RNA sequence: GGGAACGACUCGAGUAGAGUCGAAAACACAGAAUCUUCGGAUUCUGUGAAAGGAACAAAAACAUGCAAAAGUUCCAAAAAGCAUGAUGGACAAAAGUCCAAAAACACAUCGCUUCGGCGAUGUGAAUCAAUAGGCAGACUUCGGUCUGCCUAUUGAAAAAGAAACAACAACAACAAC
Reactivity to DMS in 0.01 (KOAc 150mM, MgCl2 10mM, bicine 150mM(pH8.5), 24C), signal-to-noise 1, nucleotides 027 to 126: c010a000c010a000g000a030a000u000c020u000u040c160g030g010a000u000u000c000u010g000u010g000a020a070a130g000g000a100a030c140a020a070a050a090a080c000a000u000g000c040a110a050a130a140g010u000u000c000c000a010a060a200a130a120g000c020a000u000g000a260u010g000g020a000c000a060a070a040a050g000u000c000c000a020a070a040a090a100c030a020c000a000u000c000g000c000u000u020c160g070g000c000g020a000u000g030u010g010a040a080